[RMDB]
RNA sequence: GGGAACGACUCGAGUAGAGUCGAAAAGAAAGAAAAUAAUAAGAGGUAGAGAGAGCUUCUCAGUCAAAAAGCCGGAAGAGUGCAAAUAUAACAGGAAUGUGCUACGGCGAUUUCCUGUUAGAGAAAAGGGAUAAUGUAUCUUCGGAUACAUUAUCCCAAAAGAAACAACAACAACAAC
Reactivity to 2A3 in 0.01 (KOAc 150mM, MgCl2 10mM, bicine 150mM(pH8.5), 24C), signal-to-noise 1, nucleotides 027 to 126: g000a000a070a000g110a040a080a100a040u220a040a000u230a150a000g040a000g040g050u250a060g030a000g000a000g000a000g040c040u000u000c000u000c010a030g020u030c030a000a000a000a000a280g020c020c060g000g000a010a010g080a010g020u060g000c000a030a050a130u130a000u000a000a010c010a000g010g000a020a000u000g020u090g050c000u000a000c120g070g020c000g010a070u070u000u110c030c000u000g000u040u000a070g000a020g000a000a150a070a000
Reactivity to DMS in 0.01 (KOAc 150mM, MgCl2 10mM, bicine 150mM(pH8.5), 24C), signal-to-noise 1, nucleotides 027 to 126: g000a060a050a190g010a150a060a100a160u030a110a120u050a080a130g000a110g020g010u000a020g000a180g000a120g010a140g000c060u000u010c000u000c010a070g020u000c040a020a050a040a150a110g000c030c020g010g040a020a020g000a060g020u000g010c070a050a150a050u000a050u000a010a010c010a010g000g050a040a000u000g010u120g030c000u020a120c150g000g030c010g030a060u000u000u010c060c000u010g000u000u000a000g040a110g000a000a060a040a120